[RMDB]
RNA sequence: GGGAACGACUCGAGUAGAGUCGAAAAGAUAUGGAUGGCCAGCAACAGCCUCACAGUCGGAAACGACUGGAGGACAUGCUGGUCCUAAGUCGCGAGUGAUUGGUAGCGUUCGCGCUACCAAUCACAACCGAUAGCAAAACUUCGGUUUUGCUAUCGGAAAAGAAACAACAACAACAAC
Reactivity to DMS in 0.01 (KOAc 150mM, MgCl2 10mM, bicine 150mM(pH8.5), 24C), signal-to-noise 2, nucleotides 027 to 126: g000a110u020a090u010g000g000a160u000g020g020c010c010a000g010c000a050a070c210a160g030c010c000u000c000a110c020a010g010u000c000g010g000a120a170a180c010g010a000c000u000g000g000a030g000g000a050c100a110u000g000c000u000g000g010u000c000c050u000a030a190g000u000c030g010c190g000a160g000u020g000a030u000u000g000g030u040a000g000c000g010u010u020c260g000c030g000c000u000a000c000c000a000a000u000c000a000c020a050a050
Reactivity to 2A3 in 0.01 (KOAc 150mM, MgCl2 10mM, bicine 150mM(pH8.5), 24C), signal-to-noise 1, nucleotides 027 to 126: g070a060u160a080u240g110g030a110u130g020g050c040c010a000g000c000a040a090c050a220g070c010c000u050c020a300c000a050g000u010c000g040g000a080a060a010c000g010a020c000u000g000g010a000g000g010a020c000a010u040g000c000u000g000g000u000c000c000u030a020a010g020u020c010g060c110g170a040g010u000g020a000u010u000g000g030u000a000g000c000g070u050u080c300g000c000g000c060u070a010c000c000a010a010u010c010a010c010a000a000